Notes
The record gives the reactivity of an RNA of 177 nucleotides to DMS and 2A3. The data come from the RNA Mapping Database (RMDB), library M2PK50. The reactions ran in a buffer of 150 mM KOAc, 10 mM MgCl2 and 150 mM bicine (pH 8.5), at 24 C. Reactivities are given for positions 27 through 126.

RNA sequence: GGGAACGACUCGAGUAGAGUCGAAAAGGAGCUUGAUUCGUCAAGCUCCAAAAGUUUCAGACCCGAUUCCUAGGGUAAACAAGAAGCUAUGCACCGAGGCAAAAAGGAAUGGAUUCGUCCAUUCCAAUACGAAUUCUUGAUUCGUCAAGAAUUCGUAAAAAGAAACAACAACAACAAC
Reactivity to DMS in 0.01 (KOAc 150mM, MgCl2 10mM, bicine 150mM(pH8.5), 24C), signal-to-noise 3, nucleotides 027 to 126: g000g000a020g020c000u000u010g000a030u000u020c200g040u000c010a000a010g000c000u000c000c000a010a030a060a100g010u000u010u010c150a100g000a080c000c000c000g010a150u010u000c040c030u000a190g000g000g010u000a040a080a090c120a120a090g030a050a040g000c030u000a060u010g000c040a100c070c060g010a080g020g000c130a030a050a070a100a060g010g000a000a010u000g000g010a010u000u010c220g000u000c000c010a000u000u000c000c000a040a040
Reactivity to 2A3 in 0.01 (KOAc 150mM, MgCl2 10mM, bicine 150mM(pH8.5), 24C), signal-to-noise 1, nucleotides 027 to 126: g000g000a000g000c010u000u010g000a010u030u050c030g010u000c130a000a000g000c010u000c000c000a000a000a000a000g000u010u000u020c050a060g110a070c000c010c000g000a030u070u000c000c010u050a050g000g000g010u060a050a030a040c040a020a070g140a050a000g000c040u050a040u170g050c020a040c040c050g050a050g090g000c100a040a050a000a010a060g000g000a000a000u000g000g020a030u050u050c170g040u010c060c000a000u000u000c000c000a000a010